Chemical mapping of a 177-nucleotide RNA with DMS and 2A3. Conditions: 150 mM KOAc, 10 mM MgCl2 and 150 mM bicine (pH 8.5), 24 C. DMS adducts were read by reverse transcription with MarathonRT. For 2A3 the reverse transcriptase was SuperScript II with manganese. For DMS, 6,232 sequencing reads were counted. Reactivities are given for positions 27 through 126.
[RMDB]
RNA sequence: GGGAACGACUCGAGUAGAGUCGAAAAACUGACAGCGACUGCGAGGCCUGGCUUGUUGCUCUCAAGCGUCUACUGCAUUUGAAGACUCCUGUGGAAAGGCUUCUUGAGGAACGACGGGGUACGUCAACUGCAUAAUACGGUUCGCCGUAUUAUGCAGAAAAGAAACAACAACAACAAC
Reactivity to DMS in 0.01 (KOAc 150mM, MgCl2 10mM, bicine 150mM(pH8.5), 24C), signal-to-noise 4, nucleotides 027 to 126: a080c050u010g010a080c090a040g030c060g020a040c000u000g000c060g010a120g000g020c070c010u010g000g000c040u030u020g000u000u000g010c060u000c020u020c050a060a040g020c300g010u020c010u000a080c030u000g000c040a060u010u000u010g040a060a070g000a060c090u000c010c070u020g010u010g010g000a050a090a070g000g000c050u010u010c040u030u010g030a070g010g000a040a050c050g010a080c010g010g010g020g030u000a080c070g000u010c050a060a190
Reactivity to 2A3 in 0.01 (KOAc 150mM, MgCl2 10mM, bicine 150mM(pH8.5), 24C), signal-to-noise 6, nucleotides 027 to 126: a000c100u100g090a040c010a020g030c020g060a060c020u070g040c040g060a060g010g030c010c020u030g070g010c040u020u090g040u060u110g060c020u030c010u000c060a050a010g010c010g050u040c030u060a070c030u040g020c010a120u020u080u180g130a120a040g070a080c040u040c020c040u030g030u080g020g080a090a100a060g050g000c010u070u040c000u050u150g020a070g030g010a070a050c040g050a000c030g000g020g020g080u080a050c010g040u020c030a060a060